Annotation: An RNA of 177 nucleotides, treated with DMS and 2A3 and read out base by base. The RNA was probed in 150 mM KOAc, 10 mM MgCl2 and 150 mM bicine (pH 8.5) at 24 C.

RNA sequence: GGGAACGACUCGAGUAGAGUCGAAAAUACGCUCGCAUCCCGAUUUCAAAUUGCUACACAAUUUACAAGCAGACAUUUGCUACAAGUUCGUCCUUUGGGAUUAUGAACGUAGCAAUAUUUAUGGUACCACUAAUGCGUAGUUCGCUACGCAUUAGUGAAAAGAAACAACAACAACAAC
Reactivity to DMS in 0.01 (KOAc 150mM, MgCl2 10mM, bicine 150mM(pH8.5), 24C), signal-to-noise 4, nucleotides 027 to 126: u000a060c100g020c040u000c090g020c070a150u010c010c000c000g010a150u010u020u000c160a040a070a060u000u000g000c030u000a120c210a200c070a060a060u000u000u000a070c140a090a120g010c030a040g010a140c150a040u000u000u000g000c000u000a010c010a020a120g000u000u000c010g010u010c010c000u000u010u020g030g000g010a010u000u000a030u010g030a010a020c030g000u000a010g010c000a010a000u010a030u000u000u000a070u000g020g010u010a130c230
Reactivity to 2A3 in 0.01 (KOAc 150mM, MgCl2 10mM, bicine 150mM(pH8.5), 24C), signal-to-noise 3, nucleotides 027 to 126: u020a010c020g000c030u030c050g020c010a060u000c020c010c020g010a050u030u120u090c010a060a040a040u080u020g000c030u140a050c080a000c010a120a080u080u120u140a090c050a080a060g020c020a020g040a040c050a060u030u010u050g000c000u000a000c000a150a050g000u000u010c010g000u000c030c040u070u060u250g160g000g010a010u040u040a110u240g000a000a000c010g000u000a000g000c000a010a000u020a020u010u160u050a130u090g050g020u030a050c000